[RMDB]
RNA sequence: GGGAACGACUCGAGUAGAGUCGAAAAGAUAUGGACUUGUUGAGGGAGCUCCGUAUCGGAAACGAUAUAGGAGCGAGGAUCUCACAAGUCCUAAGUCAAAACCAUAUGUUGUUCGCAACAUAUGGAACGUCCUUUAAAACUUCGGUUUUAAAGGACGAAAAGAAACAACAACAACAAC
Reactivity to 2A3 in 0.01 (KOAc 150mM, MgCl2 10mM, bicine 150mM(pH8.5), 24C), signal-to-noise 2, nucleotides 027 to 126: g000a000u020a020u060g000g010a010c020u010u050g010u100u290g100a010g000g050g020a050g000c000u000c010c000g000u000a000u000c000g000g000a010a010a000c000g000a000u010a000u090a300g010g000a010g000c000g010a030g010g010a020u020c000u000c010a020c000a010a000g000u010c000c000u000a000a000g000u000c000a000a020a090a210c010c010a000u000a000u000g000u010u000g050u060u100c300g000c230a000a010c000a010u000a000u020g000g000a010a040
Reactivity to DMS in 0.01 (KOAc 150mM, MgCl2 10mM, bicine 150mM(pH8.5), 24C), signal-to-noise 1, nucleotides 027 to 126: g000a020u000a050u010g000g000a030c000u000u000g000u000u000g000a010g000g010g000a040g000c000u000c000c000g000u000a000u000c010g010g010a010a010a010c000g010a010u000a010u000a060g020g000a010g020c000g010a050g010g010a030u010c000u000c010a010c010a000a020g010u010c000c000u000a000a060g000u000c000a130a080a170a210c010c000a010u000a000u000g000u000u000g010u010u010c230g020c030a010a010c000a010u000a000u000g000g000a050a090